[RMDB]
RNA sequence: GGGAACGACUCGAGUAGAGUCGAAAAGGGCAACGUUUAAAAUCACCGGCUGCCAGGCGUCGCGCUCCGCCAGUUUUCGGGAAUAACCGCGGGCAACCAGAAAACCGCCCACGCCGCCCAGCACGGCGAGACCAAAACUAUUCGUAGUUUUGGUCUCAAAAGAAACAACAACAACAAC
Reactivity to DMS in 0.01 (KOAc 150mM, MgCl2 10mM, bicine 150mM(pH8.5), 24C), signal-to-noise 6, nucleotides 027 to 126: g010g010g010c030a080a080c140g000u020u020u030a060a060a110a100u040c110a110c060c020g000g000c040u010g010c060c020a030g000g000c030g020u010c070g020c090g010c030u010c060c020g000c050c030a080g010u010u000u010u010c040g000g000g010a110a070u020a090a080c090c040g010c090g000g010g010c030a070a070c050c050a080g010a080a040a040a060c060c130g000c030c000c020a100c090g000c020c010g010c040c020c040a080g010c080a070c120g010g010c150
Reactivity to 2A3 in 0.01 (KOAc 150mM, MgCl2 10mM, bicine 150mM(pH8.5), 24C), signal-to-noise 9, nucleotides 027 to 126: g020g010g000c040a070a030c080g020u070u140u190a180a180a050a070u110c040a030c050c020g030g010c020u030g000c010c000a030g040g010c010g030u060c030g010c010g010c030u030c020c010g030c020c000a010g000u010u010u060u100c030g020g000g060a070a090u120a100a040c020c020g010c020g020g030g000c020a040a060c010c000a020g080a030a080a010a010c010c030g020c000c000c000a010c030g020c010c000g000c000c020c010a000g030c040a020c050g040g000c040
Structure probing data (DMS and 2A3) for a 177-nucleotide construct. DMS adducts were read by reverse transcription with MarathonRT. 2A3 adducts were read by reverse transcription with SuperScript II with manganese. Reactivities are given for positions 27 through 126.